RNA sequence: GGGAACGACUCGAGUAGAGUCGAAAAUAUCAUAAACAUUUUAUCAUGUUAAUAAAAGGUCUUUAUAAACAUGACUUCUAAAGUUUAAUUGAUACAAAAUAUUCUUCAAGUGCAUGUAUCAGACCAAGGAUUAUAUACUGUUCGCAGUAUAUAAUCCAAAAGAAACAACAACAACAAC
Reactivity to 2A3 in 0.01 (KOAc 150mM, MgCl2 10mM, bicine 150mM(pH8.5), 24C), signal-to-noise 2, nucleotides 027 to 126: u140a030u040c030a030u180a040a090a000c000a000u010u100u100u200a060u100c000a000u000g000u000u040a160a020u070a080a170a010a060g030g010u010c020u040u150u060a160u040a090a030a000c010a000u020g020a020c010u130u020c050u160a170a090a000g000u010u020u010a100a050u060u010g000a030u020a140c020a000a190a060a070u090a030u070u030c040u070u050c040a130a020g040u040g150c000a020u030g010u030a020u070c060a010g000a000c000c000a020a060
Reactivity to DMS in 0.01 (KOAc 150mM, MgCl2 10mM, bicine 150mM(pH8.5), 24C), signal-to-noise 2, nucleotides 027 to 126: u000a040u010c040a080u000a030a020a000c000a120u010u030u000u000a160u020c000a000u000g000u010u000a100a020u000a000a010a060a200g000g020u000c030u000u000u010a010u000a080a030a020c010a010u000g010a000c210u020u000c100u010a050a040a100g010u000u000u000a020a100u000u000g010a000u000a050c070a040a070a100a120u000a090u000u000c040u010u010c080a050a070g000u000g010c100a040u000g020u000a090u000c100a050g000a080c090c030a100a100